[RMDB]
The data come from the RNA Mapping Database (RMDB), library OK2TST. This 177-nucleotide RNA was probed chemically with 2A3 and DMS. Reactivities are given for positions 27 through 126.
RNA sequence: GGGAACGACUCGAGUAGAGUCGAAAAGACGAGCUCGGACGCGAUCCGGACAGCGUGCGCGCCGAGGCGGCAGGCUAUCUGCGGGAGAUGGCCGCCUCGCUGGAUGAGCGGGCCGUGCAGGCAUGGCAGUAUAUGGUAGCUUCGGCUACCAUAUACUAAAAGAAACAACAACAACAAC
Reactivity to 2A3 in 0.01 (KOAc 150mM, MgCl2 10mM, bicine 150mM(pH8.5), 24C), signal-to-noise 4, nucleotides 027 to 126: g080a030c040g020a030g030c000u020c020g000g010a010c020g000c010g030a020u000c000c010g010g030a190c260a080g010c020g020u080g020c190g010c010g000c070c010g020a010g000g000c010g000g000c030a050g170g000c040u070a050u090c020u120g080c140g120g090g010a040g000a030u070g080g010c000c000g000c000c010u000c000g010c000u020g010g020a030u040g030a030g040c020g000g050g030c000c010g010u020g010c020a020g090g000c070a050u100g070g050c040
Reactivity to DMS in 0.01 (KOAc 150mM, MgCl2 10mM, bicine 150mM(pH8.5), 24C), signal-to-noise 5, nucleotides 027 to 126: g000a140c080g010a190g010c010u000c010g010g010a160c020g010c010g010a080u000c000c020g020g000a070c160a130g020c020g020u010g020c110g030c030g020c040c010g000a020g010g010c010g000g010c030a090g010g010c080u010a050u000c010u010g010c110g000g010g010a100g000a090u020g000g010c000c000g010c030c000u000c000g010c020u000g010g010a060u000g000a140g030c010g010g010g020c010c010g010u000g010c020a140g010g000c080a070u010g010g020c150